Chemical mapping of a 207-nucleotide RNA with 2A3. The RNA was probed in 150 mM KOAc, 10 mM MgCl2 and 150 mM bicine (pH 8.5) at 24 C. Reactivities are given for positions 27 through 156.
[RMDB]
RNA sequence: GGGAACGACUCGAGUAGAGUCGAAAAUGCUGUUCGCAGCAAACGUUGGGGUCCGAGCUGGGAACAUCGAUCUAUGAACUACGACUGAAGCCUCCACGGUCGCAUAGGGAGUUCCCUAGCUCGGACGGAGGCACCCGUACCUAGGAUUCGUCCUAAAGAUCCAAAUAAGCUUCGGCUUAUUUGGAUCAAAAGAAACAACAACAACAAC
Reactivity to 2A3 in 0.01 (KOAc 150mM, MgCl2 10mM, bicine 150mM(pH8.5), 24C), signal-to-noise 1, nucleotides 027 to 156: u020g010c010u000g020u120u040c270g030c070a010g000c000a070a090a070c190g120u150u260g000g000g000g000u000c000c010g000a010g000c010u000g000g000g000a000a000c030a030u300c010g000a000u010c000u020a020u010g040a100a150c050u130a090c300g010a000c000u000g000a020a000g010c000c000u000c000c000a000c020g020g000u010c020g000c030a000u000a000g010g000g010a030g000u000u010c000c010c020u050a010g000c000u000c000g010g020a000c010g000g000a010g000g000c000a020c020c000c000g040u100a050c020c060u020a020g030g010a040u040u140c140g070u090c040c000u060a070a060a020